Chemical mapping of a 207-nucleotide RNA with 2A3 and DMS.
DMS adducts were read by reverse transcription with MarathonRT.
The reactions ran in a buffer of 150 mM KOAc, 10 mM MgCl2 and 150 mM bicine (pH 8.5), at 24 C.
The data come from the RNA Mapping Database (RMDB), library OK3TST.
RNA sequence: GGGAACGACUCGAGUAGAGUCGAAAACGGAUGGCGUCGAUAGCGCGGUUGAUCUCUUCUGUGCCACGGAAUGCGAUUACGGUUUUGGAGAUUGCGUUGGUCAUGGUAUGUACCUCAGAUGGAUUUGUUCAGGUAAGCAGCGGCGGCCAGGUAGCCGGCGAAAGUAGCGAUUCGUCGCUACUUUCGCAAAAGAAACAACAACAACAAC
Reactivity to 2A3 in 0.01 (KOAc 150mM, MgCl2 10mM, bicine 150mM(pH8.5), 24C), signal-to-noise 3, nucleotides 027 to 156: c050g020g010a050u070g020g010c020g030u050c050g120a140u100a080g020c060g030c060g040g010u030u080g070a120u020c050u010c000u110u050c030u020g040u040g030c000c010a020c050g020g030a100a050u100g020c020g020a060u070u160a150c160g020g070u080u060u070u220g090g020a110g010a050u040u090g030c020g030u060u110g060g020u030c030a040u080g050g000u160a080u120g060u090a100c000c020u030c030a030g020a070u070g040g010a060u040u060u050g070u090u110c000a030g060g050u010a040a050g010c010a010g000c040g060g010c020g010g000c030c000a000g000g050u040a010g040c030c000g020
Reactivity to DMS in 0.01 (KOAc 150mM, MgCl2 10mM, bicine 150mM(pH8.5), 24C), signal-to-noise 1, nucleotides 027 to 156: c060g020g020a070u000g010g020c040g000u020c050g030a130u000a060g020c070g020c010g020g020u000u000g010a080u000c030u010c030u010u010c050u000g030u010g030c000c000a100c050g010g010a050a040u000g030c030g000a140u000u000a120c090g020g030u010u000u010u010g010g010a140g030a050u000u010g010c040g030u010u010g050g010u010c030a170u000g010g010u000a070u000g000u000a140c030c030u000c050a090g000a070u020g020g000a140u000u000u000g000u000u010c030a130g010g000u010a100a110g000c050a070g010c040g000g010c040g020g020c020c030a090g000g000u000a130g020c010c000g000